[RMDB]
RNA sequence: GGGAACGACUCGAGUAGAGUCGAAAAUUAUUGAGCGUAGAUGUCUGUGUCACGAUACGAGUAAGUGACUCUCGUGUACUACUGGCGAAUGAGACAGAGACAUUAUAUGCUCGUGCCAGUCAAUAAAGAGAGAUAUGAUGUUCGCAUCAUAUCUCUCAAAAGAAACAACAACAACAAC
Reactivity to DMS in 0.01 (KOAc 150mM, MgCl2 10mM, bicine 150mM(pH8.5), 24C), signal-to-noise 4, nucleotides 027 to 126: u010u010a070u010u010g000a020g010c010g050u010a030g000a010u000g010u000c000u000g000u000g010u000c000a090c070g020a140u010a070c030g000a040g010u000a050a090g010u010g010a040c050u000c190u000c170g010u000g010u000a030c050u000a050c020u000g000g000c040g000a100a070u000g010a090g010a020c010a020g000a030g000a020c000a010u000u000a100u000a030u000g000c010u000c000g030u000g000c040c030a150g010u010c130a070a110u020a050a120a170
Reactivity to 2A3 in 0.01 (KOAc 150mM, MgCl2 10mM, bicine 150mM(pH8.5), 24C), signal-to-noise 3, nucleotides 027 to 126: u160u080a060u070u200g020a000g000c030g000u030a000g000a010u000g000u000c020u020g300u010g040u060c020a000c050g040a010u050a110c030g000a010g000u060a170a130g050u070g200a020c000u020c010u000c090g140u160g010u070a060c020u010a010c010u040g180g000c050g040a060a070u120g010a040g000a040c010a000g110a000g000a050c000a000u050u050a230u010a010u300g000c000u000c000g010u030g010c000c000a120g090u280c010a080a080u080a190a200a040
An RNA of 177 nucleotides, treated with DMS and 2A3 and read out base by base. The DMS profile rests on 5,046 reads. DMS adducts were read by reverse transcription with MarathonRT. 2A3 adducts were read by reverse transcription with SuperScript II with manganese. The reactions ran in a buffer of 150 mM KOAc, 10 mM MgCl2 and 150 mM bicine (pH 8.5), at 24 C.